[RMDB]
RNA sequence: GGGAACGACUCGAGUAGAGUCGAAAAGAGUGUUAUAUUAUCACGCCUAAUCACUGACGCAUCAUUGUCACAUCAUUGAAGGUGAAGGCGUGACAAUGAGGUGUUAGUGAUAAGGCGUGAUGAUGUGAUAGACUUGUAUAUUCGUAUACAAGUCUAUAAAAGAAACAACAACAACAAC
Reactivity to DMS in 0.01 (KOAc 150mM, MgCl2 10mM, bicine 150mM(pH8.5), 24C), signal-to-noise 9, nucleotides 027 to 126: g010a060g010u000g000u000u010a030u010a010u000u000a000u000c000a000c000g010c000c000u000a130a040u000c000a010c000u000g010a010c000g020c000a040u000c010a000u000u000g000u000c000a000c000a080u000c010a050u010u020g010a210a150g020g010u010g010a050a090g010g020c150g010u000g000a000c000a000a000u000g000a010g000g030u010g000u000u000a010g010u000g010a000u000a020a010g000g010c000g020u000g000a000u000g000a000u000g010u010g010
Reactivity to 2A3 in 0.01 (KOAc 150mM, MgCl2 10mM, bicine 150mM(pH8.5), 24C), signal-to-noise 9, nucleotides 027 to 126: g180a050g030u090g030u120u090a090u010a010u090u000a000u000c000a000c000g000c000c000u040a070a040u000c000a000c000u000g010a000c000g000c010a020u000c000a000u000u000g000u000c000a000c000a020u020c010a030u040u210g230a200a070g210g020u100g060a070a040g180g060c120g010u000g000a000c000a000a000u010g000a000g010g010u010g000u010u000a000g000u000g000a000u000a000a010g000g000c010g000u000g000a000u000g000a000u000g010u020g030